Chemical mapping of a 177-nucleotide RNA with 2A3 and DMS. For 2A3 the reverse transcriptase was SuperScript II with manganese. The data come from the RNA Mapping Database (RMDB), library VIROID. Conditions: 150 mM KOAc, 10 mM MgCl2 and 150 mM bicine (pH 8.5), 24 C.
[RMDB]
RNA sequence: GGGAACGACUCGAGUAGAGUCGAAAACCAUGCCGACCCGAAGAGGAAAGAAGGACGCGAGACGCGAACCUGUGAGUGGAAACCCGCUUUAUUCACUGGGGUCGACAACUCUGGGGAGAGAAGGGAGCAUAAUUCAAUACUUCGGUAUUGAAUUAUGAAAAGAAACAACAACAACAAC
Reactivity to 2A3 in 0.01 (KOAc 150mM, MgCl2 10mM, bicine 150mM(pH8.5), 24C), signal-to-noise 5, nucleotides 027 to 126: c000c000a010u050g010c020c010g020a020c000c000c010g060a100a030g060a040g100g020a050a050a020g060a010a020g020g010a010c010g070c010g060a240g080a090c080g050c010g050a160a270c010c010u060g020u050g070a020g010u020g020g010a160a110a100c020c010c000g040c040u090u130u070a130u070u080c030a020c080u040g020g000g000g000u010c010g010a020c010a050a070c020u020c060u080g040g000g000g010a040g000a010g010a050a030g040g010g000a030g000
Reactivity to DMS in 0.01 (KOAc 150mM, MgCl2 10mM, bicine 150mM(pH8.5), 24C), signal-to-noise 6, nucleotides 027 to 126: c020c020a130u010g020c020c020g010a060c030c020c020g000a100a070g000a130g010g010a050a080a120g000a110a050g010g010a230c050g010c040g010a110g000a110c090g010c040g010a070a070c010c010u000g010u010g000a020g020u000g000g000a060a080a100c120c010c010g010c080u010u000u010a080u010u000c040a050c040u000g010g000g010g010u000c020g010a050c100a040a100c080u000c060u000g010g000g000g010a080g010a060g000a050a040g010g000g010a120g010